[RMDB]
RNA sequence: GGGAACGACUCGAGUAGAGUCGAAAAUGGAUAUAGGCGAUGGGAGUGAAAUGAAGGAUGGUAUGGCCUGUUCGAAUUGUGUCACUGCUGGGCAGGAAUGCGUCUAUGCUGUUACUUCAACGGUGAGCACACCCCUACAGUUCGCUGUAGGGGUGUGAAAAGAAACAACAACAACAAC
Reactivity to 2A3 in 0.01 (KOAc 150mM, MgCl2 10mM, bicine 150mM(pH8.5), 24C), signal-to-noise 2, nucleotides 027 to 126: u110g030g000a040u060a020u060a200g020g050c060g000a020u030g040g040g000a060g020u080g060a080a050a140u110g010a020a010g050g030a020u040g030g050u110a030u080g040g000c000c020u020g000u010u030c000g040a130a070u150u120g030u040g070u090c050a040c130u040g020c020u080g010g030g010c000a050g060g000a120a060u080g010c000g030u000c010u030a050u100g000c000u000g030u110u000a150c040u030u100c050a060a030c050g060g020u050g030a040g000
Reactivity to DMS in 0.01 (KOAc 150mM, MgCl2 10mM, bicine 150mM(pH8.5), 24C), signal-to-noise 3, nucleotides 027 to 126: u020g000g010a120u010a100u010a090g000g000c040g000a090u000g010g010g000a080g030u000g010a080a090a090u000g030a100a060g000g020a060u000g010g020u010a040u000g000g010c050c020u000g000u000u000c050g000a070a100u000u010g020u000g000u000c080a080c060u000g000c090u010g000g000g000c050a030g000g010a090a070u000g010c100g010u020c030u000a050u010g020c040u000g000u010u000a070c100u000u000c090a060a070c090g000g000u010g030a090g000